[RMDB]
RNA sequence: GGGAACGACUCGAGUAGAGUCGAAAACAAAACUGACCAGCUAUGAGGUCAUACAUCGUCAUAGCAAAACAAAACAAAACUGACCAGGUAUGAGGUCAUACAUCGUCAUAGCAAACAAAACAACAAACACGUCCAUUAUGUUCGCAUAAUGGACGUGAAAAGAAACAACAACAACAAC
Reactivity to DMS in 0.01 (KOAc 150mM, MgCl2 10mM, bicine 150mM(pH8.5), 24C), signal-to-noise 1, nucleotides 027 to 126: c140a260a050a090a070c080u040g000a020c000c000a220g000c000u080a130u000g000a000g000g000u000c010a130u000a000c060a020u010c270g070u000c020a000u000a000g000c000a120a000a120a080c170a140a050a130a240c120a040a060a090a000c060u000g000a070c000c000a120g000g000u000a000u000g000a040g000g050u040c000a000u000a000c260a080u000c130g000u000c010a130u080a000g000c070a180a000a060c160a020a010a020a060c160a000a010c300a160a040a130
Reactivity to 2A3 in 0.01 (KOAc 150mM, MgCl2 10mM, bicine 150mM(pH8.5), 24C), signal-to-noise 3, nucleotides 027 to 126: c020a010a020a000a050c070u050g010a010c010c000a000g000c000u000a000u010g000a000g010g000u000c020a060u260a070c100a120u110c110g010u010c020a010u020a000g040c050a000a030a000a000c010a010a100a020a000c040a020a070a010a070c040u040g000a000c000c030a070g010g000u160a040u080g080a050g150g080u080c000a000u030a010c030a040u050c060g070u020c040a050u050a080g130c020a010a070a060c090a040a190a020a030c070a020a000c000a040a050a000
An RNA of 177 nucleotides, treated with DMS and 2A3 and read out base by base. The RNA was probed in 150 mM KOAc, 10 mM MgCl2 and 150 mM bicine (pH 8.5) at 24 C. 2A3 is a SHAPE reagent: it acylates the 2'-hydroxyl of flexible nucleotides of all four kinds.